[RMDB]
RNA sequence: GGGAACGACUCGAGUAGAGUCGAAAAUAAUGUAUCCUGCAACUUGGAAGUGAGCAUUGACAUGGACAGAAAAUGCGUCGAGAGAAGUCUUCUAGUUCUGACUCAAGGAGGAGGAAAGGGGUCUCCUAAUGCCCAGAGAAAGCAUGGAAAUCCUACAUAUUGAUGGGUAAUUCGUUACCCAUCAAUAAAAAGAAACAACAACAACAAC
Reactivity to DMS in 0.01 (KOAc 150mM, MgCl2 10mM, bicine 150mM(pH8.5), 24C), signal-to-noise 3, nucleotides 027 to 156: u010a120a050u010g010u000a160u010c020c010u000g000c060a100a100c050u010u010g010g010a130a150g020u010g000a110g020c010a050u000u010g020a100c060a100u000g020g000a110c060a130g020a060a090a040a070u000g000c020g020u000c050g000a170g000a190g020a050a090g010u000c100u000u000c030u000a090g030u000u000c030u000g000a130c080u000c050a080a100g000g000a070g000g010a100g000g010a050a110a070g020g000g000g030u010c000u000c000c040u000a060a080u000g040c010c030c010a180g010a130g010a100a050a090g020c040a050u000g010g000a070a080a060u000c030c020u010a060c060a220
Reactivity to 2A3 in 0.01 (KOAc 150mM, MgCl2 10mM, bicine 150mM(pH8.5), 24C), signal-to-noise 4, nucleotides 027 to 156: u220a020a060u080g050u050a090u040c010c010u020g010c040a060a070c040u030u090g040g030a040a060g030u060g080a040g020c050a050u040u060g040a060c020a100u100g010g040a030c040a070g140a080a090a020a040u100g030c050g050u060c040g030a030g000a000g030a160a040g010u010c010u030u000c000u040a020g040u050u000c030u050g070a080c000u010c050a010a040g040g000a020g010g010a010g010g000a050a000a050g000g000g000g020u010c000u000c010c000u020a060a050u060g030c020c040c020a020g010a010g000a080a050a000g010c020a010u040g030g000a020a050a050u020c030c000u090a080c040a080